[RMDB]
RNA sequence: GGGAACGACUCGAGUAGAGUCGAAAAAGGCUCACUGCAGCCUCAACCUCCCUGGGCUCAAGUGAUGCUCUUGCCUCAGCCUCCUGAGUAGCUGAGACUACAGGCACACACCACCAUGCCUGACCAGUUUUUUUGUAUUUUUGGUAGAGACAGGGUACGUAAUGAUAAUCUUCGGAUUAUCAUUACGAAAAGAAACAACAACAACAAC
Reactivity to DMS in 0.01 (KOAc 150mM, MgCl2 10mM, bicine 150mM(pH8.5), 24C), signal-to-noise 3, nucleotides 027 to 156: a060g010g020c020u010c010a150c100u010g010c090a060g000c020c010u000c030a090a110c050c040u000c000c000c000u000g030g020g020c020u000c040a070a050g040u000g020a040u010g000c020u000c060u000u000g030c020c010u000c030a040g000c020c010u010c070c050u000g020a150g010u000a040g000c020u000g000a040g020a040c010u000a140c040a020g010g030c010a070c140a090c060a120c020c030a020c030c020a180u000g010c030c000u010g020a070c040c020a080g020u010u000u000u000u010u000u000g010u000a100u000u000u000u000u000g010g020u000a100g010a090g020a080c040a050g010g020g030u000a150
Reactivity to 2A3 in 0.01 (KOAc 150mM, MgCl2 10mM, bicine 150mM(pH8.5), 24C), signal-to-noise 7, nucleotides 027 to 156: a000g040g000c040u040c030a270c180u190g070c150a010g000c000c010u020c010a080a090c000c020u030c030c000c000u030g040g070g000c010u010c070a110a130g020u040g080a170u100g020c040u040c000u110u080g030c010c000u010c010a010g000c010c010u150c020c060u170g070a060g070u110a020g030c020u020g010a000g000a020c010u060a040c030a020g010g010c000a010c000a010c010a050c050c030a020c010c010a040u080g020c010c020u040g020a060c030c030a030g020u010u010u020u010u000u100u110g130u050a170u010u090u030u060u060g010g020u030a030g000a000g000a040c010a020g000g000g030u070a020